This 177-nucleotide RNA was probed chemically with 2A3 and DMS. DMS adducts were read by reverse transcription with MarathonRT. The data come from the RNA Mapping Database (RMDB), library TTRDES. Conditions: 150 mM KOAc, 10 mM MgCl2 and 150 mM bicine (pH 8.5), 24 C. The 2A3 profile rests on 1,944 reads.

[RMDB]
RNA sequence: GGGAACGACUCGAGUAGAGUCGAAAAGAUAUGGAAUGGACAGCUUUUGACGCGAGCCACUCGGAAACGAGUGGGCUCGCGAUAAGCUGUCAUUCCUAAGUCAAAGUGUGUUCUUCGGAACACACAACUAUUAGUUGGCGUUCGCGCCAACUAAUAGAAAAGAAACAACAACAACAAC
Reactivity to 2A3 in 0.01 (KOAc 150mM, MgCl2 10mM, bicine 150mM(pH8.5), 24C), signal-to-noise 2, nucleotides 027 to 126: g030a000u030a020u110g000g060a000a000u010g170g190a000c000a010g000c020u210u220u300u300g300a210c170g000c010g010a000g000c000c000a000c000u000c000g000g030a080a040a000c020g000a040g030u020g000g020g010c020u020c000g040c020g000a000u000a000a000g020c000u020g000u000c000a000u000u000c020c000u000a060a010g000u010c110a160a170a140g000u020g010u050g000u030u000c000u030u130c300g130g020a020a000c020a000c000a010c000a040a010
Reactivity to DMS in 0.01 (KOAc 150mM, MgCl2 10mM, bicine 150mM(pH8.5), 24C), signal-to-noise 1, nucleotides 027 to 126: g020a010u000a300u010g000g000a020a010u000g000g030a040c000a000g020c000u000u000u020u010g040a200c220g020c000g000a010g000c040c000a020c000u010c000g020g030a050a040a170c000g010a000g050u000g000g010g070c020u000c040g070c000g010a000u010a020a020g000c000u000g010u000c000a030u000u020c000c000u010a030a140g010u010c050a110a100a100g020u010g010u000g030u000u000c000u010u010c290g060g000a010a000c000a000c000a020c010a040a140